[RMDB]
The record gives the reactivity of an RNA of 207 nucleotides to 2A3 and DMS. It was measured as part of the RMDB library OK3TST. Conditions: 150 mM KOAc, 10 mM MgCl2 and 150 mM bicine (pH 8.5), 24 C.

RNA sequence: GGGAACGACUCGAGUAGAGUCGAAAAUUUGGACUGCAUGUUCAAUUGCAAAUUGUGUGUUGAGAUAACCUCUGAGACUCUCAUGCUGAGGCCAGAAUCAAAAGAAAGGAUUGGGGAAGUCAUGUCACUGCGACAGCUAGGACAUAAACUGCUGACACUUUAACCGUGGAUUCGUCCACGGUUAAAGAAAAGAAACAACAACAACAAC
Reactivity to 2A3 in 0.01 (KOAc 150mM, MgCl2 10mM, bicine 150mM(pH8.5), 24C), signal-to-noise 1, nucleotides 027 to 156: u020u040u080g010g010a050c030u020g110c240a070u180g000u050u160c050a050a000u090u090g110c100a010a090a150u100u050g000u020g010u050g040u040u090g010a030g010a060u030a130a100c050c020u000c020u100g110a140g010a160c000u040c000u000c040a040u140g020c050u030g010a020g040g060c020c010a010g100a080a040u020c010a000a120a020a110g200a060a070a000g020g000a040u010u020g000g020g000g000a030a030g090u040c010a060u100g010u010c030a020c220u050g010c010g140a070c000a010g000c010u030a010g070g030a020c000a030u200a070a050a010c030u050g050c020u050g040a050c010a000
Reactivity to DMS in 0.01 (KOAc 150mM, MgCl2 10mM, bicine 150mM(pH8.5), 24C), signal-to-noise 1, nucleotides 027 to 156: u010u000u010g070g060a070c010u000g010c110a080u000g010u000u000c040a030a160u030u010g030c040a110a030a220u030u000g040u000g000u000g020u000u010g030a070g000a150u000a100a060c060c000u000c010u000g010a220g040a140c060u000c010u010c030a100u000g020c040u000g030a040g040g050c000c040a040g020a170a150u000c040a030a060a040a110g000a070a060a150g020g030a150u000u010g040g010g000g000a040a150g030u010c060a080u000g060u000c010a110c110u000g010c030g010a040c050a020g050c020u000a090g050g010a080c050a030u000a010a040a060c040u000g000c050u000g010a130c170a110